[RMDB]
RNA sequence: GGGAACGACUCGAGUAGAGUCGAAAACGCGGGGCAGGGCGCACGGCGCCGGCGGGUCCCAAGGAGAUUGAGAUGCUCGGCCGCCGUCUCCUGCAGGGCGCGCAGCGGCCAGAACUGGACCUGACGCUAAUAAUUAGCCCUUCGGGGCUAAUUAUUAAAAAGAAACAACAACAACAAC
Reactivity to 2A3 in 0.01 (KOAc 150mM, MgCl2 10mM, bicine 150mM(pH8.5), 24C), signal-to-noise 3, nucleotides 027 to 126: c030g010c010g030g040g090g010c000a020g040g010g000c090g000c100a020c030g070g010c030g010c000c000g020g000c050g000g000g110u020c000c000c000a010a010g130g020a160g020a070u090u150g020a100g000a060u150g160c040u090c180g040g000c200c030g020c000c000g000u000c030u040c000c000u060g010c030a020g010g130g040c040g000c000g000c030a030g050c020g000g030c030c010a000g030a080a090c100u130g010g010a070c000c000u000g010a010c040g020c020
Reactivity to DMS in 0.01 (KOAc 150mM, MgCl2 10mM, bicine 150mM(pH8.5), 24C), signal-to-noise 3, nucleotides 027 to 126: c030g020c020g020g010g010g000c040a050g010g000g010c140g020c160a040c020g020g000c020g040c020c010g000g010c020g000g000g000u000c000c020c010a080a050g010g030a130g030a100u010u000g000a080g000a020u010g010c020u030c050g010g000c050c060g030c000c030g000u000c040u010c020c020u000g000c100a060g010g010g000c060g040c030g000c030a050g020c030g000g020c030c000a050g010a200a100c040u010g000g010a110c060c030u000g010a070c080g010c150
Structure probing data (2A3 and DMS) for a 177-nucleotide construct. The data come from the RNA Mapping Database (RMDB), library OK1LIB. The RNA was probed in 150 mM KOAc, 10 mM MgCl2 and 150 mM bicine (pH 8.5) at 24 C.